[RMDB]
RNA sequence: GGGAACGACUCGAGUAGAGUCGAAAAGUUCCCUCUUAGCGUGGAGGUUUAACUACGCUCGUUCCCCAUAUCGGUGUGGGCGCACCGGAUGUAUAAAUCAAAGUCCUUUAGGGAACGGAAAGGAACAAAAAUCCAUGGGAGUUCGCUCCCAUGGAAAGGAUAAACGCUGGUUCGCCAGCGUUUAUCCAAAAGAAACAACAACAACAAC
Reactivity to 2A3 in 0.01 (KOAc 150mM, MgCl2 10mM, bicine 150mM(pH8.5), 24C), signal-to-noise 1, nucleotides 027 to 156: g030u020u080c000c000c000u040c030u000u060a000g010c000g040u000g060g000a100g060g140u180u170u160a000a090c000u000a000c020g000c020u000c000g000u000u020c000c030c000c040a010u130a060u090c040g080g000u000g000u000g030g110g020c100g000c010a000c010c010g020g000a040u110g050u170a140u130a190a010a010u250c270a010a010a010g010u010c000c040u000u020u110a020g020g000g000a020a000c020g000g000a090a150a020g050g010a000a080c040a060a190a120a000a070u000c000c000a000u020g010g000g000a020g000u050u010c040g120c050u000c000c000c000a000u010g000g000a000a000a000